Chemical mapping of a 177-nucleotide RNA with 2A3 and DMS. Values cover nucleotides 27 to 126. The reactions ran in a buffer of 150 mM KOAc, 10 mM MgCl2 and 150 mM bicine (pH 8.5), at 24 C. 2A3 adducts were read by reverse transcription with SuperScript II with manganese. It was measured as part of the RMDB libraries RFM100 and RFMREP.

[RMDB]
RNA sequence: GGGAACGACUCGAGUAGAGUCGAAAACGCAAGGGUGAAAAUUAAAGAAAUUGACGGAGCUACACCACAAGGAGUGGAUUGUGCGGCUUAAUUUGACUCAACGCGAGGAAACUUACCAGGGCCAAGUCAAGAGUACACAUUUCGAUGUGUACUCUUGAAAAGAAACAACAACAACAAC
Reactivity to 2A3 in 0.01 (KOAc 150mM, MgCl2 10mM, bicine 150mM(pH8.5), 24C), signal-to-noise 7, nucleotides 027 to 126: c040g010c030a050a040g060g030g050u070g060a100a070a060a060u130u110a100a080a050g120a040a120a070u110u120g040a030c020g020g020a040g010c010u030a030c020a030c020c000a030c030a100a090g190g020a070g070u040g020g040a100u110u130g040u050g030c050g010g000c020u030u010a020a040u070u050u050g030a030c010u000c050a040a040c040g000c020g030a020g020g060a070a050a010c040u070u050a040c040c020a020g020g010g010c020c010a030a000g040u000
Reactivity to DMS in 0.01 (KOAc 150mM, MgCl2 10mM, bicine 150mM(pH8.5), 24C), signal-to-noise 3, nucleotides 027 to 126: c080g040c020a080a090g010g010g010u010g020a040a030a060a090u010u020a030a080a080g030a050a060a090u020u010g000a030c030g010g010a080g020c010u000a060c040a090c060c050a050c050a120a110g000g020a170g010u000g000g010a130u010u010g050u020g030c010g020g030c030u000u010a040a100u040u000u000g000a050c000u000c020a060a110c080g010c010g000a070g000g020a060a090a050c060u000u000a090c020c010a050g030g000g010c040c020a050a070g010u050